[RMDB]
RNA sequence: GGGAACGACUCGAGUAGAGUCGAAAAGCGCGGCGCUACGGCGCGAUGACUUGUCCUAUCAUGCCGAACUGGAUUGGUGGACUUCACCGUUCGUGCUGACCGAUGGCGUGCCACCGCUGGCGCUCGCGCCUCGCCAGGCAUUCGUGCCUGGCGAGGCAAAAGAAACAACAACAACAAC
Reactivity to 2A3 in 0.01 (KOAc 150mM, MgCl2 10mM, bicine 150mM(pH8.5), 24C), signal-to-noise 4, nucleotides 027 to 126: g040c020g000c010g000g020c000g020c060u160a110c030g030g000c010g030c040g010a050u070g030a040c070u140u210g020u070c010c000u050a040u060c020a040u280g040c000c010g020a030a030c090u260g030g070a240u190u110g070g010u070g000g170a220c000u150u070c110a020c020c010g020u010u040c050g050u190g050c050u030g010a030c040c080g090a070u080g010g000c040g020u040g020c000c010a060c030c000g030c040u020g070g020c000g000c020u060c020g000c000
Reactivity to DMS in 0.01 (KOAc 150mM, MgCl2 10mM, bicine 150mM(pH8.5), 24C), signal-to-noise 2, nucleotides 027 to 126: g000c000g080c100g020g000c000g000c010u010a110c080g000g000c020g000c100g000a020u010g010a070c100u020u040g020u000c010c010u130a130u000c030a050u000g000c010c000g040a110a030c090u060g000g010a210u060u000g010g020u020g010g030a040c080u000u040c000a110c020c010g000u050u010c020g020u000g000c050u000g000a090c190c190g000a110u020g000g040c010g070u000g000c070c000a000c110c000g010c100u020g000g010c020g000c020u020c090g040c040